[RMDB]
RNA sequence: GGGAACGACUCGAGUAGAGUCGAAAACUAACUACUCUCUAGCAGCUUAGGCUAGCUAGCCAUCAACCACACGUUUCGCACGUGGACAGUGGAUUCUGAUGGUCAUAUUACAGUGUGCUAGCGAGGGAACUCCGUCCGGGGGUGAACCGCGAAACAGCUUCUACGCUAUGUUCGCAUAGCGUAGAAGAAAAGAAACAACAACAACAAC
Reactivity to 2A3 in 0.01 (KOAc 150mM, MgCl2 10mM, bicine 150mM(pH8.5), 24C), signal-to-noise 6, nucleotides 027 to 156: c040u060a030a020c020u060a030c010u030c020u000c000u010a000g000c010a010g000c010u080u150a170g090g070c020u040a080g000c000u000a000g000c020c000a010u020c010a030a090c010c000a030c010a020c160g000u000u020u010c040g000c000a010c010g010u020g000g030a020c020a060g010u010g000g050a110u220u030c060u160g000a000u010g030g010u040c030a030u070a100u190u180a020c010a010g060u050g000u010g200c000u030a030g000c000g030a300g000g000g010a010a000c000u010c010c000g260u210c120c070g140g000g000g000g010u000g010a020a010c010c000g000c010g030a010a070a020c020a040g020
Reactivity to DMS in 0.01 (KOAc 150mM, MgCl2 10mM, bicine 150mM(pH8.5), 24C), signal-to-noise 2, nucleotides 027 to 156: c060u000a040a100c020u020a110c020u000c030u000c030u020a010g040c010a110g000c030u000u000a190g010g040c040u000a060g060c010u000a150g020c000c030a050u000c010a030a300c030c030a060c030a050c040g000u000u000u020c190g010c170a090c050g060u020g000g030a040c080a190g000u000g000g030a140u000u000c230u000g010a020u000g030g000u010c040a080u010a080u000u000a110c100a060g020u000g020u000g040c040u010a060g010c050g000a120g030g000g010a090a050c040u000c010c010g020u010c160c080g070g010g050g010g000u000g010a120a100c000c010g010c060g000a070a080a140c100a170g000
Structure probing data (2A3 and DMS) for a 207-nucleotide construct. For DMS, 2,304 sequencing reads were counted. 2A3 is a SHAPE reagent: it acylates the 2'-hydroxyl of flexible nucleotides of all four kinds. It was measured as part of the RMDB library ARCHII. The reactions ran in a buffer of 150 mM KOAc, 10 mM MgCl2 and 150 mM bicine (pH 8.5), at 24 C. For 2A3 the reverse transcriptase was SuperScript II with manganese.